Structure probing data (2A3 and DMS) for a 207-nucleotide construct.
2A3 adducts were read by reverse transcription with SuperScript II with manganese.
It was measured as part of the RMDB library PDB130.
[RMDB]
RNA sequence: GGGAACGACUCGAGUAGAGUCGAAAACACCCGUUUCAGCACAGUUGGAGGAGAGGGGAUAAGAUUUAUUGAUGAAAUUUGUGAUUUGCAUCGUGGUACAGAAAAGUUAUGUGAAUAUAAAAGUGUAGAACAAUGUCUUCCGAUUUCGACAGGUUAGCCUCUCAAAGUAGUUCGCUACUUUGAGAGGAAAAGAAACAACAACAACAAC
Reactivity to 2A3 in 0.01 (KOAc 150mM, MgCl2 10mM, bicine 150mM(pH8.5), 24C), signal-to-noise 2, nucleotides 027 to 156: c100a050c010c020c000g010u000u080u060c070a060g000c040a040c010a070g030u070u070g010g000a010g020g030a060g000a010g050g030g000g000a010u110a160a040g010a060u010u150u160a090u070u190g060a060u040g030a040a070a110u110u100u090g070u030g010a040u020u000u070g000c020a040u060c040g020u030g050g000u050a050c000a030g040a040a050a020a030g010u030u030a060u120g040u040g030a080a000u140a060u060a120a070a020a000g040u030g010u080a030g030a050a020c030a050a050u060g000u000c020u030u050c050c060g040a020u060u080u050c020g000a010c000a000g000g000u060u020a020g000
Reactivity to DMS in 0.01 (KOAc 150mM, MgCl2 10mM, bicine 150mM(pH8.5), 24C), signal-to-noise 2, nucleotides 027 to 156: c060a220c000c000c000g010u000u010u020c120a200g010c070a060c060a050g010u030u010g040g030a210g000g000a090g000a060g000g020g020g000a130u000a040a120g030a170u020u000u000a090u020u020g000a130u020g000a070a030a050u000u040u010g000u000g000a090u010u010u000g050c020a040u000c090g070u000g010g060u000a160c070a150g000a040a070a030a080g010u000u000a020u010g040u020g000a080a060u010a110u010a060a050a030a090g010u000g000u010a060g010a080a080c070a010a040u000g000u000c030u010u010c040c030g000a140u010u010u000c050g010a050c010a030g000g010u000u000a110g000